[RMDB]
RNA sequence: GGGAACGACUCGAGUAGAGUCGAAAAGGGGUCGAGGGAGGAGCGUAGAGGCAACAGCUACACUGAAGCCUCCACGGUGUAGACAUGCCUUCAAGCUCCAUCGAUCUCGACGGAGGCACCCAAAAGUCCCGAAAUCUGUUCGCAGAUUUCGGGACAAGAUUACGUCGUAGUUCGCUACGACGUAAUCAAAAGAAACAACAACAACAAC
Reactivity to 2A3 in 0.01 (KOAc 150mM, MgCl2 10mM, bicine 150mM(pH8.5), 24C), signal-to-noise 2, nucleotides 027 to 156: g030g020g070g030u000c020g010a010g040g000g000a020g000g010a020g000c010g080u220a010g000a010g010g030c090a300a050c060a260g000c000u010a000c000a000c010u050g020a120a020g010c010c000u000c010c000a010c000g000g000u000g000u020a000g020a070c130a260u300g010c010c010u010u020c020a040a000g000c000u010c010c010a010u030c010g000a000u000c000u000c010g000a000c000g000g000a000g000g000c010a010c010c000c000a090a140a010a020g000u000c000c000c000g000a010a020a010u000c020u000g060u120u170c300g000c180a000g000a000u000u010u000c000g000g000g020a000c000a000a000